[RMDB]
RNA sequence: GGGAACGACUCGAGUAGAGUCGAAAAAAAACCAAGGGAAUUAUUCAUUGCAUUCCUUAAGCAUGAUAUUGAAGUUAUAGCUACUACUGUCAUAUUACACUUAAAAACCAAAAAAGCUUAAACUUGGUAAUGUGUACUCCAAUUCCAUUUAAAUCAAGUGGGUAUUAGUAUUCGUACUAAUACCCACAAAAGAAACAACAACAACAAC
Reactivity to 2A3 in 0.01 (KOAc 150mM, MgCl2 10mM, bicine 150mM(pH8.5), 24C), signal-to-noise 2, nucleotides 027 to 156: a000a000a000a000c050c030a020a000g030g000g020a010a030u030u030a000u130u210c030a030u050u220g010c010a030u000u100c000c020u010u060a040a060g000c020a020u080g010a010u080a050u050u120g040a040a000g030u080u000a030u040a080g070c050u080a050c000u000a010c020u100g030u030c000a010u030a070u120u040a050c030a010c020u080u090a080a070a120a050a070c090c010a060a000a040a040a120a000g110c050u150u090a170a050a070c050u050u000g010g030u030a030a030u070g030u010g000u000a030c010u010c080c030a040a000u120u130c010c010a060u160u300u300a060a300a040u300c030a080a040
Chemical mapping of a 207-nucleotide RNA with 2A3.
Conditions: 150 mM KOAc, 10 mM MgCl2 and 150 mM bicine (pH 8.5), 24 C.
Reactivities are given for positions 27 through 156.
It was measured as part of the RMDB library OK3TST.